RNA sequence: GGGAACGACUCGAGUAGAGUCGAAAAUCCACGGGGACCGGGCGGUGGAGUCGGAUCGAAUCGACCCAGGAUGUAAUCGGGCCGACGCGCUUCCUGCGGACAAACGGCGAGAAGGCGCCAUCCUGCGGUUGACCCUAAGGUUCGCCUUAGGGUCAACAAAAGAAACAACAACAACAAC
Reactivity to DMS in 0.01 (KOAc 150mM, MgCl2 10mM, bicine 150mM(pH8.5), 24C), signal-to-noise 2, nucleotides 027 to 126: u000c010c010a100c080g040g020g000g030a110c120c000g010g000g020c100g010g010u000g000g010a190g020u000c010g000g000a100u000c070g010a150a180u010c030g010a030c010c000c010a080g010g020a040u000g010u030a040a090u000c130g000g000g000c010c020g040a040c070g030c070g050c010u000u000c060c020u010g040c080g000g000a080c210a060a090a110c130g000g000c010g020a090g000a120a110g020g020c050g040c070c040a020u010c000c010u010g010c130g010
Reactivity to 2A3 in 0.01 (KOAc 150mM, MgCl2 10mM, bicine 150mM(pH8.5), 24C), signal-to-noise 1, nucleotides 027 to 126: u020c000c000a040c020g040g010g000g020a000c080c020g070g020g020c050g010g020u040g010g060a100g000u010c000g040g010a040u100c020g040a030a070u070c020g000a040c030c000c000a020g020g010a030u060g090u160a170a120u110c010g020g060g060c050c000g000a030c000g020c010g030c010u010u050c020c020u090g080c010g020g030a020c060a060a250a030c010g040g050c030g030a020g050a080a040g030g000c050g010c040c000a010u010c010c010u060g000c070g080
This 177-nucleotide RNA was probed chemically with DMS and 2A3.
For 2A3, 1,191 sequencing reads were counted.
Values cover nucleotides 27 to 126.